The record gives the reactivity of an RNA of 207 nucleotides to 2A3 and DMS. For 2A3 the reverse transcriptase was SuperScript II with manganese. DMS adducts were read by reverse transcription with MarathonRT. The data come from the RNA Mapping Database (RMDB), library OK3TST. Conditions: 150 mM KOAc, 10 mM MgCl2 and 150 mM bicine (pH 8.5), 24 C. High DMS reactivity at an A or C suggests that its Watson-Crick edge is free. For 2A3, 3,325 sequencing reads were counted.
RNA sequence: GGGAACGACUCGAGUAGAGUCGAAAAGAGUACAUAUGCCCAGCCUUACUGGGGCGGCUGGAUGCUUCGUGCAAAUGCUAUGUACGCCUACGUAUAUGUGCGUAGAUGCCUAUAUUUUCUCUCCUGAGAAAAUAUAGAUGCAUACAAAGUCCAUGCACUAUAAUGAGUGCUUCGGCACUCAUUAUAGAAAAGAAACAACAACAACAAC
Reactivity to 2A3 in 0.01 (KOAc 150mM, MgCl2 10mM, bicine 150mM(pH8.5), 24C), signal-to-noise 4, nucleotides 027 to 156: g040a040g000u020a000c010a000u050a030u290g000c010c000c010a010g000c000c010u110u140a130c140u140g000g020g060g030c020g000g000c000u020g020g020a100u110g000c030u110u220c220g110u170g020c010a040a080a180u180g010c010u020a000u030g010u000a000c000g020c010c000u010a010c010g030u030a070u010a050u300g110u050g060c000g010u030a010g000a040u020g000c000c000u000a000u000a000u000u010u000u000c010u000c020u070c050c190u170g000a000g000a000a000a000a000u000a000u000a000g010a020u130g000c000a010u040a070c040a030a100a030g050u020c040c020a030u080g010c030a020
Reactivity to DMS in 0.01 (KOAc 150mM, MgCl2 10mM, bicine 150mM(pH8.5), 24C), signal-to-noise 2, nucleotides 027 to 156: g010a180g010u010a100c060a070u020a050u010g010c000c000c010a070g000c040c090u000u000a130c050u010g010g020g040g080c300g000g030c020u020g000g000a220u000g010c040u000u000c090g010u000g000c020a070a110a200u010g020c020u000a110u000g010u000a010c000g010c060c010u000a040c020g020u000a180u010a110u010g020u000g030c000g020u000a010g000a070u010g000c060c010u000a010u000a000u000u000u010u000c000u000c000u010c210c260u000g010a040g000a030a010a020a010u000a010u000a000g010a080u000g010c010a050u000a060c060a080a090a130g010u000c080c020a250u000g010c030a250